[RMDB]
RNA sequence: GGGAACGACUCGAGUAGAGUCGAAAACUACUUGGGAGGCUGAGGUCAGAGGAUCACUUGAAGCCAGGAAGUCAAUGCUGCAGUAAGCUAUGAUGGCAUCAGUGCAUUCCAGCCUGACCAAUGGAACUGAUCAGUAUGAGUUCGCUCAUACUGAUCAAAAAGAAACAACAACAACAAC
Reactivity to DMS in 0.01 (KOAc 150mM, MgCl2 10mM, bicine 150mM(pH8.5), 24C), signal-to-noise 7, nucleotides 027 to 126: c020u000a040c070u000u000g010g000g000a130g020g000c030u000g020a260g000g010u000c060a040g020a100g020g000a030u000c010a030c030u020u010g030a030a060g030c000c000a130g020g020a080a140g000u000c040a050a250u010g010c020u000g000c120a160g000u010a120a050g010c010u000a140u000g010a080u000g010g020c010a060u000c030a020g020u000g020c300a040u010u000c020c020a080g010c150c020u000g010a060c040c030a080a070u010g010g000a130a120c180
Reactivity to 2A3 in 0.01 (KOAc 150mM, MgCl2 10mM, bicine 150mM(pH8.5), 24C), signal-to-noise 4, nucleotides 027 to 126: c010u080a000c010u030u030g000g030g000a020g040g040c010u050g030a030g020g050u050c020a010g010a020g070g000a020u030c000a000c020u090u220g010a010a010g000c000c010a020g090g130a090a040g040u070c030a010a090u110g000c000u040g020c040a200g110u200a080a030g000c010u030a050u190g050a060u100g020g000c010a020u010c010a000g000u000g030c030a030u140u000c020c000a030g030c000c010u030g010a070c000c010a010a040u080g020g030a060a040c050